[RMDB]
RNA sequence: GGGAACGACUCGAGUAGAGUCGAAAACAUCGUCCCAAGGGUGAAAGUGGAAGCCGAUCGCAUUACAACUUGGACGUACUCGGCGAUACCAUGUUGCAAGUUUGCAGAGCCAGUCGUUUGCGACGCCACCGAUCGGGUGGUUCGCCACCCGAUCGGUAAAAGAAACAACAACAACAAC
Reactivity to DMS in 0.01 (KOAc 150mM, MgCl2 10mM, bicine 150mM(pH8.5), 24C), signal-to-noise 2, nucleotides 027 to 126: c140a090u000c070g020u000c000c020c000a130a120g000g010g010u000g000a080a100a070g050u000g000g000a140a070g030c060c050g010a110u010c040g010c010a030u000u000a080c100a060a090c140u020u010g000g000a090c020g010u030a100c160u000c040g000g000c010g040a150u000a070c030c080a100u010g010u010u000g010c000a060a180g000u000u010u000g020c060a030g010a210g030c000c090a050g000u010c080g000u000u010u010g000c020g000a020c060g030c060c050
Reactivity to 2A3 in 0.01 (KOAc 150mM, MgCl2 10mM, bicine 150mM(pH8.5), 24C), signal-to-noise 1, nucleotides 027 to 126: c000a120u110c030g090u040c020c020c000a010a030g140g010g030u080g060a100a120a100g020u060g000g040a170a000g020c020c020g050a110u070c060g050c000a050u030u150a150c000a160a000c120u050u170g000g040a020c060g000u100a050c030u060c010g040g000c010g000a010u060a050c020c000a040u140g140u030u140g020c130a110a150g050u130u140u040g000c010a020g000a010g140c020c060a030g030u050c010g010u040u010u180g090c040g000a000c030g070c000c050
Structure probing data (DMS and 2A3) for a 177-nucleotide construct. Conditions: 150 mM KOAc, 10 mM MgCl2 and 150 mM bicine (pH 8.5), 24 C.